Annotation: An RNA of 207 nucleotides, treated with 2A3 and read out base by base. The 2A3 profile rests on 471 reads. The reactions ran in a buffer of 150 mM KOAc, 10 mM MgCl2 and 150 mM bicine (pH 8.5), at 24 C. Reactivities are given for positions 27 through 156. For 2A3 the reverse transcriptase was SuperScript II with manganese.
RNA sequence: GGGAACGACUCGAGUAGAGUCGAAAAGGAAUUGGAAGGUCAUCCUUCACAGGAUCGUGUGGAAGUCCUGCUCGGGUCGGAAGCAUUAAAACCAUUCGAGCUAGUCAAUGCGUGGCGUGUCUCUCCGGUGUUUCUCUGGACUUCGGUCCAGAGAAAAAGUCCGAGUAAGUUUCGACUUACUCGGACUAAAAGAAACAACAACAACAAC
Reactivity to 2A3 in 0.01 (KOAc 150mM, MgCl2 10mM, bicine 150mM(pH8.5), 24C), signal-to-noise 1, nucleotides 027 to 156: g070g010a040a160u250u240g060g040a090a020g100g060u300c060a160u100c020c020u100u100c090a090c040a080g130g000a100u220c120g070u140g070u150g090g130a150a060g020u000c000c000u000g000c000u000c000g000g000g000u010c000g000g020a030a030g050c000a010u040u210a090a030a000a000c050c000a010u080u120c020g000a000g060c020u130a020g080u060c030a080a070u060g000c020g020u010g030g020c010g020u020g070u030c070u010c000u000c010c010g110g000u010g020u070u020u000c000u020c000u000g020g000a000c000u030u000c130g020g000u000c000c000a020g000a000g020a000a000a000a000